[RMDB]
RNA sequence: GGGAACGACUCGAGUAGAGUCGAAAAGAAAGAAAGAAAGACUGGCCGGGCCAAGGGCUGCAACACAGGACAUGGGUCCUGCUCUCCUCCCCGCUCGUGUCUUGUGUUGCAGCCAGUGGAGCUGCAAUGCAGCAUAACAGUUCGCUGUUAUGCUGCAAAAAGAAACAACAACAACAAC
Reactivity to 2A3 in 0.01 (KOAc 150mM, MgCl2 10mM, bicine 150mM(pH8.5), 24C), signal-to-noise 2, nucleotides 027 to 126: g050a000a030a010g090a020a060a010g090a050a040a010g050a050c050u060g020g010c000c010g020g040g020c000c020a060a050g040g020g000c010u000g000c000a010a000c000a000c010a010g000g020a000c000a000u030g000g030g000u060c000c020u040g050c020u010c030u060c000c010u040c020c000c000c000g000c010u000c000g000u010g010u000c000u010u000g000u000g000u010u000g000c000a000g000c000c000a000g010u000g000g010a060g050c010u020g020c010a000a110
Reactivity to DMS in 0.01 (KOAc 150mM, MgCl2 10mM, bicine 150mM(pH8.5), 24C), signal-to-noise 2, nucleotides 027 to 126: g000a090a060a070g000a110a040a050g000a070a070a060g000a090c060u010g000g020c030c030g000g010g010c000c030a040a030g020g000g000c000u000g000c010a000a010c000a000c000a000g000g000a010c000a010u000g000g000g000u000c060c060u000g000c060u000c030u010c050c020u000c010c000c010c020g010c000u000c010g030u000g010u010c000u000u010g010u000g010u020u000g000c000a010g000c000c000a010g020u000g000g000a040g040c000u000g000c050a090a140